[RMDB]
RNA sequence: GGGAACGACUCGAGUAGAGUCGAAAACUCGGCGAACUCGAAGGCGUCGAGCGCGAGGCGACCCGGCAGGCCUUCGAACGGGUAAACGCCGCCUUCCGCGAGUACAGCGCCGAGCUGCUCGGCGGCGUCCGGGCUAUGGGUUCGCCCAUAGCCCGGAAAAAGAAACAACAACAACAAC
Reactivity to 2A3 in 0.01 (KOAc 150mM, MgCl2 10mM, bicine 150mM(pH8.5), 24C), signal-to-noise 1, nucleotides 027 to 126: c000u010c000g010g040c020g060a120a100c010u000c000g000a020a000g060g040c000g070u000c010g010a040g000c060g040c000g170a160g150g030c070g000a270c000c000c000g000g020c020a120g000g260c000c040u000u010c000g000a040a000c040g090g080g000u060a030a080a020c000g030c040c040g000c040c000u230u160c060c030g060c020g000a060g030u050a010c000a040g000c010g010c080c130g000a030g030c010u050g000c010u040c050g010g000c110g050g000c000g000